Structure probing data (2A3 and DMS) for a 177-nucleotide construct. 2A3 adducts were read by reverse transcription with SuperScript II with manganese.

[RMDB]
RNA sequence: GGGAACGACUCGAGUAGAGUCGAAAAAUUUGGAAGCGAAUGAAGAUUUUCGAAAAACAUGGCAGUAUUCUAACGUUAUGUAUACUAUGCUAGGUUUUUUGGUAGAAUCCAUAACGGAUACCUCAUGACGUACUCGCUAUUUCGAUAGCGAGUACGUAAAAGAAACAACAACAACAAC
Reactivity to 2A3 in 0.01 (KOAc 150mM, MgCl2 10mM, bicine 150mM(pH8.5), 24C), signal-to-noise 3, nucleotides 027 to 126: a040u130u090u090g120g000a060a010g060c020g100a120a070u070g030a190a090g030a060u010u070u060u070c020g020a000a000a000a000a000c000a020u030g010g000c000a000g030u000a010u020u050c030u090a070a210c110g180u270u060a080u300g020u020a020u000a000c050u050a090u210g020c000u000a020g020g130u000u000u000u000u000u040g070g000u090a050g050a030a000u000c010c010a020u030a120a050c050g000g030a040u150a180c010c000u040c010a060u260g030
Reactivity to DMS in 0.01 (KOAc 150mM, MgCl2 10mM, bicine 150mM(pH8.5), 24C), signal-to-noise 2, nucleotides 027 to 126: a120u000u040u010g010g000a030a070g010c020g000a110a010u000g000a250a100g020a050u010u000u000u020c000g000a000a010a000a010a000c000a040u000g000g050c040a030g000u020a020u000u000c060u020a080a110c280g020u080u060a050u000g000u000a000u000a040c010u030a110u020g020c000u000a060g010g000u000u000u000u000u000u000g000g000u000a010g010a070a050u040c000c000a100u000a120a080c050g000g000a160u010a100c010c010u000c060a020u070g000

Notes:
The data come from the RNA Mapping Database (RMDB), library OK1LIB. For 2A3, 1,279 sequencing reads were counted. Values cover nucleotides 27 to 126.